[RMDB]
RNA sequence: GGGAACGACUCGAGUAGAGUCGAAAAGUUCCUCCCCCCGAAGGUCCCGAGUGAGGCUUAUCCCGGGGAUCGGCCUCUGUCCCUCCAUGGUGAGCUCCAGGACCCCCAAAAGGAGGGGGGUGGGCCUAAAGUGAAGUCUUCGGACUUCACAAAAGAAACAACAACAACAAC
Reactivity to DMS in 0.01 (KOAc 150mM, MgCl2 10mM, bicine 150mM(pH8.5), 24C), signal-to-noise 5, nucleotides 027 to 129: g020u040u000c020c020u020c040c020c010c020c020c000g030a160a010g000g000u010c020c030c060g030a110g040u030g030a030g000g000c010u020u030a050u000c000c050c150g000g000g000g000a060u050c030g000g000c020c020u000c040u050g010u070c000c040c000u000c040c040a100u040g070g000u000g010a140g020c050u040c080c030a120g050g030a150c080c040c030c000c020a000a070a110a210g000g040a080g010g000g020g020g020g040u080g020g020g030c020c000u020a050a110a080
Reactivity to 2A3 in 0.01 (KOAc 150mM, MgCl2 10mM, bicine 150mM(pH8.5), 24C), signal-to-noise 5, nucleotides 027 to 129: g010u020u000c000c000u010c000c000c000c000c000c000g050a060a010g010g010u040c010c010c000g040a100g110u170g020a000g010g020c000u020u020a020u050c010c030c060g140g050g040g000a000u020c050g000g000c000c010u020c020u040g060u040c000c000c020u010c010c010a020u020g010g010u050g050a070g010c020u040c040c010a050g010g080a120c000c000c000c000c000a030a130a050a070g080g020a070g000g000g000g010g020g000u260g010g000g000c010c010u060a060a020a000